Chemical mapping of a 177-nucleotide RNA with 2A3 and DMS. For DMS the reverse transcriptase was MarathonRT.

[RMDB]
RNA sequence: GGGAACGACUCGAGUAGAGUCGAAAAGGGUGGACUGGCCCAGCAGGAGCAUGGGGCUCCAUAUUCUGUGUGGCUAGGCAUCUGUGGGUGCUGCUUGGGAGACAUGUAGACUGCCAGCAUUGUACACCAACAAUAAACACUUCGGUGUUUAUUGUUGAAAAGAAACAACAACAACAAC
Reactivity to 2A3 in 0.01 (KOAc 150mM, MgCl2 10mM, bicine 150mM(pH8.5), 24C), signal-to-noise 8, nucleotides 027 to 126: g030g010g010u050g010g060a250c020u020g010g000c000c020c000a010g030c010a010g000g040a020g040c090a050u080g020g000g130g130c090u030c030c010a010u040a030u060u030c030u020g060u010g060u120g080g000c010u020a020g020g010c010a020u010c030u040g060u120g090g050g010u040g010c010u010g000c030u080u160g030g000g000a030g020a030c030a040u150g080u100a040g040a120c020u050g090c030c000a010g010c010a040u040u140g030u040a010c040a030c040
Reactivity to DMS in 0.01 (KOAc 150mM, MgCl2 10mM, bicine 150mM(pH8.5), 24C), signal-to-noise 9, nucleotides 027 to 126: g010g010g020u000g000g010a140c020u000g010g000c010c000c080a180g010c070a030g010g000a040g000c190a050u000g000g000g020g010c220u020c000c010a020u000a040u000u000c030u000g010u000g010u010g010g000c030u000a020g010g010c020a020u000c020u000g010u000g010g010g010u000g010c040u000g000c030u000u010g030g000g000a060g010a100c080a090u010g010u010a120g010a140c030u000g000c010c010a030g000c020a060u000u010g010u000a080c060a100c130